[RMDB]
RNA sequence: GGGAACGACUCGAGUAGAGUCGAAAAGACACGCUUUGCAGAUGACCUCCUCGUUGGUGGGUGUCGGUAAUGUUGUCAGUCACAGGCAACAGUUAACGAUCUGCGUAAAUAAAAAGAGAAGAACAAACAGUAUCGCAGUGUUCGCACUGCGAUACUGAAAAGAAACAACAACAACAAC
Reactivity to DMS in 0.01 (KOAc 150mM, MgCl2 10mM, bicine 150mM(pH8.5), 24C), signal-to-noise 2, nucleotides 027 to 126: g110a000c050a000c000g000c000u000u060u000g030c000a030g030a030u000g000a000c000c040u000c130c000u000c270g000u000u000g030g020u040g000g000g000u000g000u000c030g050g000u030a110a230u000g000u000u000g000u000c000a050g000u010c300a070c300a110g000g010c000a000a000c000a000g000u010u070a000a100c030g000a070u000c010u000g080c000g050u030a020a100a080u110a020a180a100a010a230g000a010g000a190a080g030a070a110c100a200a030a110
Reactivity to 2A3 in 0.01 (KOAc 150mM, MgCl2 10mM, bicine 150mM(pH8.5), 24C), signal-to-noise 2, nucleotides 027 to 126: g040a000c030a000c010g220c030u090u260u230g000c010a010g010a010u000g000a000c000c000u010c010c040u170c220g090u110u260g020g000u000g000g050g030u030g000u000c000g000g000u030a110a000u010g000u000u000g000u000c000a000g100u100c060a010c020a140g020g000c000a000a000c010a010g010u000u050a000a030c030g000a000u020c000u010g010c000g000u060a070a210a050u140a010a090a060a000a010g140a000g030a150a000g030a040a100c040a150a030a000